[RMDB]
RNA sequence: GGGAACGACUCGAGUAGAGUCGAAAAUAGGCCCAGGUGGGGAUUGAGAUUCUGCAUUUCCAAUUAGUGCCUGGGUGAGGUGGAUGCUGCUUGUCCACCGACCACACUUUGAGUAGCAAGGGCCUAGCAUAAAGCCACCUUCAGGUACCUUGUGCUCUCAGCAGAUGAUGUUCGCAUCAUCUGCUGAAAAAGAAACAACAACAACAAC
Reactivity to 2A3 in 0.01 (KOAc 150mM, MgCl2 10mM, bicine 150mM(pH8.5), 24C), signal-to-noise 2, nucleotides 027 to 156: u050a010g060g050c000c000c000a000g020g030u050g000g130g010g000a000u010u120g040a120g040a140u240u170c130u200g220c130a080u030u080u040c000c000a000a030u020u070a120g190u010g070c050c010u000g000g040g010u000g000a060g000g040u000g000g010a060u070g030c230u150g010c020u210u160g140u000c000c000a000c000c000g000a010c000c010a050c000a000c060u230u130u000g030a030g000u100a070g080c000a000a000g000g000g030c000c010u020a030g000c030a110u200a200a160a000g000c060c000a140c030c000u050u050c060a010g070g000u220a300c010c000u010u000g000u000g000c000u000c000
The data come from the RNA Mapping Database (RMDB), library OK3TST. The record gives the reactivity of an RNA of 207 nucleotides to 2A3. Values are in units of 0.01, from 0 to 300, in steps of 10. The reactions ran in a buffer of 150 mM KOAc, 10 mM MgCl2 and 150 mM bicine (pH 8.5), at 24 C. The 2A3 profile rests on 545 reads.